[RMDB]
RNA sequence: GGGAACGACUCGAGUAGAGUCGAAAACUCUGAGACUGGACCUCUUGUGUAGGAAUUCAUUUAGUAUCAACAAUGUUGGGUUACACUCUGGAUGAAAGUUUUGGAUUCAAAGAAAUCCAAACUGCACCACCUUCAGAGAAUUCGUUCUCUGAAGGUGAAAAGAAACAACAACAACAAC
Reactivity to DMS in 0.01 (KOAc 150mM, MgCl2 10mM, bicine 150mM(pH8.5), 24C), signal-to-noise 3, nucleotides 027 to 126: c030u000c030u000g010a080g020a120c090u000g010g010a130c050c060u000c020u010u010g010u000g030u000a070g010g000a120a100u010u000c070a030u000u000u000a050g000u000a060u010c060a050a040c050a110a100u000g000u000u000g010g000g000u020u010a080c080a080c110u000c090u010g000g000a070u010g000a070a060a100g000u000u010u000u010g010g000a010u000u000c040a110a100a210g010a080a020a020u000c000c000a000a010a050c030u010g000c070a050c120
Reactivity to 2A3 in 0.01 (KOAc 150mM, MgCl2 10mM, bicine 150mM(pH8.5), 24C), signal-to-noise 2, nucleotides 027 to 126: c010u000c050u040g030a030g040a040c070u120g070g060a080c020c030u070c010u070u050g030u000g040u050a060g070g190a070a080u090u010c020a030u000u060u150a100g010u030a060u100c010a030a000c010a130a220u160g030u070u080g100g000g020u030u040a030c060a010c050u020c070u070g040g010a020u030g040a110a130a090g020u060u050u120u080g000g020a000u020u030c070a250a230a270g100a170a050a000u010c000c000a000a020a030c000u010g000c010a010c010

Notes:
Conditions: 150 mM KOAc, 10 mM MgCl2 and 150 mM bicine (pH 8.5), 24 C. An RNA of 177 nucleotides, treated with DMS and 2A3 and read out base by base. It was measured as part of the RMDB library OK2TST. 2A3 adducts were read by reverse transcription with SuperScript II with manganese. Reactivities are given for positions 27 through 126. DMS adducts were read by reverse transcription with MarathonRT.